[RMDB]
RNA sequence: GGGAACGACUCGAGUAGAGUCGAAAAUUAUGAUAAGUACCAAAUUCGAAAUCAUCCACAUGGAAGUAGAAGGUUGGCCAUAAAGAAUUUGAUUGUAAGCACAGAUUUGGAAUUGCUGAGGGAACAAAUCAUUGUUCAUUUUCGAAUGAACAAUGAUAAAAGAAACAACAACAACAAC
Reactivity to DMS in 0.01 (KOAc 150mM, MgCl2 10mM, bicine 150mM(pH8.5), 24C), signal-to-noise 7, nucleotides 027 to 126: u020u030a040u010g020a070u010a060a090g020u010a140c040c010a050a060a070u020u010c040g000a080a110a070u010c040a040u010c090c130a110c190a110u010g000g000a040a050g020u010a060g010a050a040g000g010u010u000g020g000c100c040a050u000a020a090a070g000a050a060u020u000u010g000a090u010u010g010u010a040a060g030c080a060c070a030g000a060u000u010u000g020g010a140a080u010u000g000c010u000g000a030g010g010g000a050a050c090a020a050
Reactivity to 2A3 in 0.01 (KOAc 150mM, MgCl2 10mM, bicine 150mM(pH8.5), 24C), signal-to-noise 5, nucleotides 027 to 126: u100u040a040u110g070a080u070a160a030g050u040a100c040c000a040a060a010u080u040c020g060a050a030a040u070c030a050u040c040c040a070c060a140u140g020g000a030a010g030u060a050g000a080a030g090g040u080u060g040g000c010c010a030u080a140a140a050g060a080a070u160u050u080g140a180u070u110g100u130a020a080g040c020a010c000a040g120a090u050u090u120g060g040a070a070u050u030g010c010u040g020a070g020g030g010a030a020c010a050a140
The record gives the reactivity of an RNA of 177 nucleotides to DMS and 2A3. 2A3 adducts were read by reverse transcription with SuperScript II with manganese. The reactions ran in a buffer of 150 mM KOAc, 10 mM MgCl2 and 150 mM bicine (pH 8.5), at 24 C. Source: RMDB library OK1LIB, as collected in RNAgym.